[RMDB]
RNA sequence: GGGAACGACUCGAGUAGAGUCGAAAACGCCCCUGAAGGUGGCCGACCGCGACUCGCUGCUUCUGGCUGGCGGACAGGGCGGGGCCCAGCGCUACGGCUUCGACCGCGUCUUCUCCCCCGAGGAGGGAUCGUAGCUGAAUUUCGAUUCAGCUACGAUAAAAGAAACAACAACAACAAC
Reactivity to DMS in 0.01 (KOAc 150mM, MgCl2 10mM, bicine 150mM(pH8.5), 24C), signal-to-noise 2, nucleotides 027 to 126: c170g010c050c030c040c090u010g010a120a130g000g030u020g020g010c030c040g010a120c080c100g000c030g000a060c100u000c040g010c030u000g000c090u000u000c100u010g010g010c040u010g020g010c040g010g010a130c130a060g000g000g000c010g010g020g000g020c020c010c070a080g000c040g000c040u000a080c070g010g000c020u000u010c040g010a060c020c010g010c150g000u000c000u010u000c030u010c010c000c000c030c020g000a150g000g000a070g000g000g000